[RMDB]
RNA sequence: GGGAACGACUCGAGUAGAGUCGAAAAGCACUCCCUGUGACCCGUGCCGAAAUGCGGGGGCGACUGUCUGGUGAGGGCAACCAGGCCUUUGGCAGUCUUCAUGAAAUCGUAGAGUCUCUGUCCUUUUGGAUCGGGGGUUUGCAUAUGCAACUUCAAACCUGUUAGCAUAGUUCGCUAUGCUAACAGGAAAAGAAACAACAACAACAAC
Reactivity to DMS in 0.01 (KOAc 150mM, MgCl2 10mM, bicine 150mM(pH8.5), 24C), signal-to-noise 1, nucleotides 027 to 156: g020c060a110c090u000c000c010c010u010g000u000g000a140c030c010c000g000u000g060c010c040g040a030a060a040u010g010c100g000g000g000g100g000c040g010a110c020u000g010u000c010u000g000g000u000g020a240g020g010g020c130a050a100c010c020a020g000g010c000c080u010u000u010g000g000c040a110g010u000c070u000u010c020a130u010g050a110a050a090u010c050g020u010a100g010a300g000u000c000u000c020u000g010u020c000c050u000u020u000u000g010g000a100u000c060g000g030g000g000g010u000u000u000g000c000a140u010a110u000g010c040a050a260c060u000u000c020a090a120a210
Reactivity to 2A3 in 0.01 (KOAc 150mM, MgCl2 10mM, bicine 150mM(pH8.5), 24C), signal-to-noise 3, nucleotides 027 to 156: g070c030a010c160u020c000c000c030u060g050u050g060a060c000c000c030g060u090g070c010c060g090a030a020a030u110g010c000g010g010g000g030g000c020g020a090c010u010g000u000c050u040g140g030u070g070a070g030g000g010c030a090a100c040c020a120g090g000c000c000u090u090u090g000g000c000a000g000u000c000u050u030c030a090u070g120a080a070a050u120c110g060u140a050g030a080g110u000c030u030c010u040g240u240c020c070u100u080u140u120g030g000a050u100c020g010g000g000g020g020u070u090u070g030c010a080u140a070u290g060c030a060a090c060u110u070c050a010a040a060

An RNA of 207 nucleotides, treated with DMS and 2A3 and read out base by base. The reactions ran in a buffer of 150 mM KOAc, 10 mM MgCl2 and 150 mM bicine (pH 8.5), at 24 C. The data come from the RNA Mapping Database (RMDB), library ARCHII.